RNA sequence: GGGAACGACUCGAGUAGAGUCGAAAAAAGACUGGCGACUUUAUGUCUACAAUUAUUACUUCCUGCCAAACUGCUGUUAGUAAGCUUCUAGAUACAUGUUUUGAAGCUACAGAAGCAACAUUUAACUGACCUCGCGAGUUCGCUCGCGAGAAAAGAAACAACAACAACAAC
Reactivity to 2A3 in 0.01 (KOAc 150mM, MgCl2 10mM, bicine 150mM(pH8.5), 24C), signal-to-noise 3, nucleotides 027 to 129: a060a000g060a010c050u020g000g000c000g020a050c070u050u100u080a160u180g060u000c040u100a020c070a050a050u190u050a050u030u080a140c010u040u010c000c000u020g040c010c000a040a040a020c090u020g000c000u050g030u120u030a020g000u000a160a000g000c000u010u010c010u020a000g040a000u090a080c100a080u190g020u020u020u000u050g010a000a000g000c000u000a000c000a030g030a010a000g050c030a000a030c010a090u080u180u090a070a060c030u060g110a070c000
Reactivity to DMS in 0.01 (KOAc 150mM, MgCl2 10mM, bicine 150mM(pH8.5), 24C), signal-to-noise 4, nucleotides 027 to 129: a010a050g020a020c130u030g010g040c110g020a010c060u030u070u000a140u040g000u020c090u030a110c130a000a000u080u030a050u060u040a090c170u040u040c060c000u030g070c150c080a030a140a120c000u020g020c060u050g000u050u030a020g040u010a030a050g020c040u060u000c010u050a020g000a130u040a040c210a000u040g000u000u020u020u020g020a030a040g030c020u030a020c020a070g000a120a030g010c150a000a070c210a110u130u000u040a090a100c100u040g000a000c110